[RMDB]
RNA sequence: GGGAACGACUCGAGUAGAGUCGAAAAAUGGCGAAUGCAUGGGGAACUACAUCUGUGUCGCGAGUUCGAUUCUCGCCAGGGCCUGGCCCUGUAGCUCAGUUGGUAGAGCAAGCUGUUCCCCGGACACAAAAUCCAGCUAGGUUCGCCUAGCUGGAAACCUUAUCGACUACUUCGGUAGUCGAUAAGGAAAAGAAACAACAACAACAAC
Reactivity to 2A3 in 0.01 (KOAc 150mM, MgCl2 10mM, bicine 150mM(pH8.5), 24C), signal-to-noise 2, nucleotides 027 to 156: a000u110g080g000c030g060a140a020u170g020c080a070u090g000g000g000g000a020a020c040u120a030c110a120u160c050u030g120u010g050u100c000g010c000g000a000g000u000u000c020g000a020u000u000c000u000c000g000c000c000a000g000g020g000c060c300u180g140g030c000c000c000u000g010u000a010g000c000u000c000a050g010u150u150g120g160u150a000g010a000g000c010a010a000g010c040u040g000u010u000c000c000c000c000g000g000a010c000a010c030a020a120a020a020u000c000c000a000g000c000u000a000g000g000u020u000c030g050c050c000u000a010g030c010u000g000g000a010a020a020
Reactivity to DMS in 0.01 (KOAc 150mM, MgCl2 10mM, bicine 150mM(pH8.5), 24C), signal-to-noise 2, nucleotides 027 to 156: a050u000g010g010c060g020a140a130u020g030c080a150u010g020g000g000g000a030a100c020u000a060c050a050u010c020u020g090u000g010u000c000g000c010g000a050g010u000u000c000g000a300u000u000c000u000c000g030c000c000a030g020g020g030c030c100u000g040g010c000c000c030u000g000u000a090g020c000u000c030a080g010u000u030g030g050u000a050g000a000g060c000a240a170g020c160u010g000u000u000c000c000c000c000g010g000a160c070a070c020a020a080a110a070u000c000c000a010g000c000u000a010g010g000u000u030c140g030c000c010u010a000g000c000u000g020g000a000a010a040